[RMDB]
RNA sequence: GGGAACGACUCGAGUAGAGUCGAAAAGAUAUGGAGGUAGAACUACGCUGUUACAGCUCCAACAGCACCCUAGCAUCGGAAACGAUGCUAGGGUGACAUGGAGAAGGUGGGCGCUACCUCCUAAGUCGGCAUGAAUAAUGUUCGCAUUAUUCAUGCCAAAAGAAACAACAACAACAAC
Reactivity to DMS in 0.01 (KOAc 150mM, MgCl2 10mM, bicine 150mM(pH8.5), 24C), signal-to-noise 1, nucleotides 027 to 126: g000a080u010a300u000g020g010a020g000g000u000a010g020a160a100c090u000a300c020g020c000u000g010u000u020a140c100a200g000c000u000c020c030a030a070c300a230g010c000a010c000c000c000u000a040g020c000a020u010c000g030g010a120a060a160c000g000a010u000g000c000u000a000g000g000g010u020g000a020c010a230u000g000g000a020g000a000a020g010g010u010g000g000g040c060g000c000u000a010c030c010u020c000c000u000a000a060g000u010c100
Reactivity to 2A3 in 0.01 (KOAc 150mM, MgCl2 10mM, bicine 150mM(pH8.5), 24C), signal-to-noise 2, nucleotides 027 to 126: g080a060u110a050u180g000g010a000g070g010u040a000g040a120a060c110u270a040c300g010c060u070g160u300u220a090c000a040g060c050u000c040c020a040a100c140a080g180c000a000c000c010c000u000a000g050c000a000u000c010g000g020a160a020a010c040g020a030u000g000c020u000a020g000g000g000u000g000a000c000a060u040g000g000a010g040a040a020g160g110u300g110g060g000c060g020c020u020a010c000c000u040c000c010u010a000a000g040u010c070